[RMDB]
RNA sequence: GGGAACGACUCGAGUAGAGUCGAAAAACAUGAUACGUCAUGAAUGACCAAAGAACGAAUCGUCGAAUCGGAUGUCUGAGUUAAUUAGUCAGAGAAAUUCGAAUCGACAUUCGACCUGUGGUCACAAACGACUUUUCACGUUCGCGUGAAAAGUCGUAAAAGAAACAACAACAACAAC
Reactivity to 2A3 in 0.01 (KOAc 150mM, MgCl2 10mM, bicine 150mM(pH8.5), 24C), signal-to-noise 2, nucleotides 027 to 126: a000c010a030u000g020a000u050a020c190g090u010c020a010u020g010a100a080u040g000a020c000c000a080a000a000g000a070a020c010g000a010a000u010c210g040u000c000g020a010a030u000c020g000g000a010u000g050u000c010u000g040a040g080u080u100a150a070u220u200a070g100u010c000a020g040a000g030a010a170a000u000u000c000g000a010a000u020c000g000a000c000a000u000u000c000g030a020c020c010u040g070u030g040g010u000c000a000c040a010a100